[RMDB]
RNA sequence: GGGAACGACUCGAGUAGAGUCGAAAACUGCCCUUUAUUUUCGCAUAAAUUCAGAUUUUGUGUGCCUUUUAUGUUCGUCUCUUAAACGUACUGAUGUGGUGUUAUAUCUAAGGGCGGAUAAUUAACGCGAUAAGAUAACUUUCGAGUUAUUUUAUCGAAAAGAAACAACAACAACAAC
Reactivity to DMS in 0.01 (KOAc 150mM, MgCl2 10mM, bicine 150mM(pH8.5), 24C), signal-to-noise 9, nucleotides 027 to 126: c050u010g000c000c010c010u000u010u010a020u010u010u010u010c060g000c030a030u010a030a050a050u010u020c240a120g010a130u010u010u000u000g010u000g010u010g010c060c020u000u010u020u010a030u040g010u000u000c020g010u000c050u020c150u020u040a050a100a050c050g010u010a030c040u010g010a070u010g010u020g010g010u010g010u020u020a040u010a050u010c080u010a020a020g010g010g010c000g000g000a050u010a040a080u020u010a070a090c270g010
Reactivity to 2A3 in 0.01 (KOAc 150mM, MgCl2 10mM, bicine 150mM(pH8.5), 24C), signal-to-noise 7, nucleotides 027 to 126: c010u020g000c000c000c000u010u060u010a060u010u050u010u070c020g000c010a010u030a040a070a020u130u070c050a030g060a120u000u010u020u020g030u010g000u020g020c010c010u040u060u000u010a070u110g010u020u030c000g000u000c030u000c010u050u090a030a020a000c020g000u010a010c010u020g060a060u040g030u030g030g010u030g010u050u070a120u010a020u030c040u010a000a010g010g000g000c000g010g000a020u040a040a070u070u050a040a020c030g000
The record gives the reactivity of an RNA of 177 nucleotides to DMS and 2A3. The 2A3 profile rests on 24,603 reads. It was measured as part of the RMDB library OK1LIB. The reactions ran in a buffer of 150 mM KOAc, 10 mM MgCl2 and 150 mM bicine (pH 8.5), at 24 C.